[RMDB]
RNA sequence: GGGAACGACUCGAGUAGAGUCGAAAAUCGCCAUGAUCCAGUAGAUGAGCGAAGCCGCCAGGUACAUGGUGAACACCUCCAGCGUGCGCGAGGUAAUCAACUGCGCUUGACGGAACAGCUCCGGCAAGGAUGCUCCAGUAUUCGUACUGGAGCAUCCAAAAGAAACAACAACAACAAC
Reactivity to 2A3 in 0.01 (KOAc 150mM, MgCl2 10mM, bicine 150mM(pH8.5), 24C), signal-to-noise 3, nucleotides 027 to 126: u060c030g020c030c010a070u160g040a060u050c030c050a030g060u100a070g090a290u180g020a020g000c020g010a010a010g040c020c000g000c000c000a000g020g000u030a050c030a150u110g030g020u020g030a020a010c020a020c020c000u000c020c020a090g010c070g260u270g030c110g020c080g020a010g000g000u020a020a150u040c020a000a060c010u010g010c020g000c050u000u020g010a010c000g010g000a040a020c010a040g000c000u010c020c040g000g000c030a060a140
Reactivity to DMS in 0.01 (KOAc 150mM, MgCl2 10mM, bicine 150mM(pH8.5), 24C), signal-to-noise 2, nucleotides 027 to 126: u010c070g000c020c000a140u020g010a100u000c010c020a140g020u000a110g000a170u000g010a040g020c010g030a130a260g000c010c000g010c000c000a040g010g020u020a050c070a030u000g020g000u010g000a050a130c290a020c010c000u000c000c050a230g050c060g010u020g030c140g010c120g000a020g010g010u000a100a210u000c010a000a120c020u010g010c030g000c020u000u020g000a030c000g020g000a020a010c090a300g010c010u010c010c180g020g000c100a120a150